RNA sequence: GGGAACGACUCGAGUAGAGUCGAAAAUAACAGCACUUAGCGAUGUCGAUAACGACGAAGAAACGCGCAAAAUUCUGAGCACGCUGUCGUUGCGCCAGCUGGAAACUCGCGUUGCCCAGGCGCUGGAACGUCCAGUCGAUUUCGAUCGACUGGACGUAAAAGAAACAACAACAACAAC
Reactivity to 2A3 in 0.01 (KOAc 150mM, MgCl2 10mM, bicine 150mM(pH8.5), 24C), signal-to-noise 2, nucleotides 027 to 126: u140a030a000c030a020g030c030a050c100u040u110a080g000c020g080a120u160g040u050c010g060a060u140a200a090c000g040a000c000g000a050a020g020a060a050a000c060g040c020g000c070a060a050a080a300u200u050c100u150g020a010g000c030a000c080g000c040u030g050u120c050g110u090u080g010c040g000c060c050a030g000c000u030g030g120a120a000a030c020u050c030g000c010g030u060u060g010c000c000c030a040g040g000c000g050c020u000g020g070a110
Reactivity to DMS in 0.01 (KOAc 150mM, MgCl2 10mM, bicine 150mM(pH8.5), 24C), signal-to-noise 2, nucleotides 027 to 126: u000a050a180c010a030g020c020a080c140u010u000a070g020c090g010a080u000g010u000c040g000a140u010a080a050c010g010a060c010g040a110a080g000a070a040a090c090g020c040g040c260a120a100a050a130u020u000c060u000g020a140g000c100a060c060g000c000u020g040u000c090g000u010u000g010c020g010c000c070a100g060c020u000g000g000a050a100a040c100u010c200g000c050g000u000u000g000c040c010c000a200g000g040c050g000c030u010g020g010a050